[RMDB]
Structure probing data (DMS and 2A3) for a 177-nucleotide construct. For DMS, 3,630 sequencing reads were counted. The data come from the RNA Mapping Database (RMDB), library RFMREP. The 2A3 profile rests on 6,742 reads.
RNA sequence: GGGAACGACUCGAGUAGAGUCGAAAAGCAGUGUUCGCACUGCAAAAAUGGCACUGCAUGAAUUCACGGAUGCAUUGCGACAGACCGCGGAUCAUGCGGUACCAUAGAAAAGCAGCCUUCGGGCUGCGAUUGGAGAGAACUUCGGUUCUCUCCAAUCAAAAGAAACAACAACAACAAC
Reactivity to DMS in 0.01 (KOAc 150mM, MgCl2 10mM, bicine 150mM(pH8.5), 24C), signal-to-noise 4, nucleotides 027 to 126: g010c000a010g020u000g020u000u010c240g040c020a000c000u000g020c020a010a020a050a140a040u000g000g010c020a000c000u000g000c000a020u000g000a050a170u000u000c010a030c010g010g010a300u000g000c010a060u000u030g040c300g000a110c020a030g000a200c000c000g000c050g010g000a030u000c010a020u000g010c000g000g010u000a000c000c010a020u000a080g000a070a070a110a170g010c000a000g000c000c000u000u020c150g030g000g010c000u000g010c000
Reactivity to 2A3 in 0.01 (KOAc 150mM, MgCl2 10mM, bicine 150mM(pH8.5), 24C), signal-to-noise 2, nucleotides 027 to 126: g020c010a000g000u020g020u070u180c170g040c080a000c010u020g000c010a000a000a000a080a070u010g010g000c010a000c010u010g000c000a000u000g030a070a150u040u010c010a010c010g010g000a000u010g000c020a040u090u300g040c050g070a060c020a000g100a160c000c010g000c020g000g010a010u020c010a000u010g000c000g000g000u010a000c000c010a000u040a030g150a020a160a000a020g000c000a000g000c010c000u040u120c240g110g020g000c000u000g000c000